RNA sequence: GGGAACGACUCGAGUAGAGUCGAAAAGAAAUAAAGUCGUAAGACGUAAAGCGGGUAAAAGAUAUACGUAACCGCGUAAACAGGUAGGUCGUAAGUAUAUCGUAAAUAAGACCGUAACUGGUAAGAAGGGAUUAUGAAUGUUCGCAUUCAUAAUCCCAAAAGAAACAACAACAACAAC
Reactivity to 2A3 in 0.01 (KOAc 150mM, MgCl2 10mM, bicine 150mM(pH8.5), 24C), signal-to-noise 2, nucleotides 027 to 126: g090a000a120a170u300a220a030a000g000u040c060g000u100a100a110g020a010c100g000u050a030a000a050g000c000g050g010g020u130a060a170a080a000g040a000u060a000u020a120c010g010u020a000a000c000c000g000c000g170u020a050a050a050c000a000g010g010u120a160g000g010u070c030g000u090a270a000g040u000a000u000a010u140c010g000u000a070a060a070u300a160a060g010a010c000c000g000u010a010a020c000u020g000g090u040a000a300g090a050a120
Reactivity to DMS in 0.01 (KOAc 150mM, MgCl2 10mM, bicine 150mM(pH8.5), 24C), signal-to-noise 3, nucleotides 027 to 126: g000a130a030a100u000a070a060a130g020u000c030g000u070a130a040g010a000c020g020u030a040a110a130g060c000g010g000g000u030a050a090a100a090g010a020u010a000u000a020c010g000u020a130a160c030c000g000c010g000u010a100a190a120c020a050g000g030u000a120g000g000u010c030g000u000a090a050g030u000a000u000a010u000c040g000u030a050a060a100u030a110a120g000a010c010c000g000u050a040a040c120u010g000g010u050a100a140g000a170a110